[RMDB]
RNA sequence: GGGAACGACUCGAGUAGAGUCGAAAACGUCGUGAACUAGCGACAAUGCAUUAGGUCCAUCGUUAUCUAACCGAAACAUCGUGACUAGUGGUAGAAUAGAACCACGAGAGGUCGCUGGCAAACAAAGACGGAGUGUGUUAUUCGUGGUACGCUCCGUAAAAGAAACAACAACAACAAC
Reactivity to 2A3 in 0.01 (KOAc 150mM, MgCl2 10mM, bicine 150mM(pH8.5), 24C), signal-to-noise 9, nucleotides 027 to 126: c040g050u050c030g020u030g060a070a040c020u010a020g000c000g010a000c000a020a070u140g030c040a050u050u090a050g010g030u010c030c010a060u040c100g030u030u040a140u100c040u040a020a070c040c030g020a020a020a010c030a030u090c070g090u110g060a030c010u030a050g010u010g020g010u040a030g070a170a080u120a070g080a040a010c000c000a000c000g020a040g000a010g080g000u000c000g000c000u000g020g000c030a020a040a020c020a030a100a010g080
Reactivity to DMS in 0.01 (KOAc 150mM, MgCl2 10mM, bicine 150mM(pH8.5), 24C), signal-to-noise 9, nucleotides 027 to 126: c070g010u040c140g010u010g000a220a220c020u000a030g000c010g010a010c020a110a060u020g000c120a110u020u010a090g000g000u000c020c040a100u020c140g000u000u010a100u010c040u010a120a090c210c110g000a080a050a060c040a050u010c150g020u040g010a070c020u010a070g010u000g000g000u000a060g000a110a140u040a100g010a080a040c010c000a000c000g000a100g010a090g000g000u000c010g010c010u000g000g000c040a040a170a030c050a070a090a110g000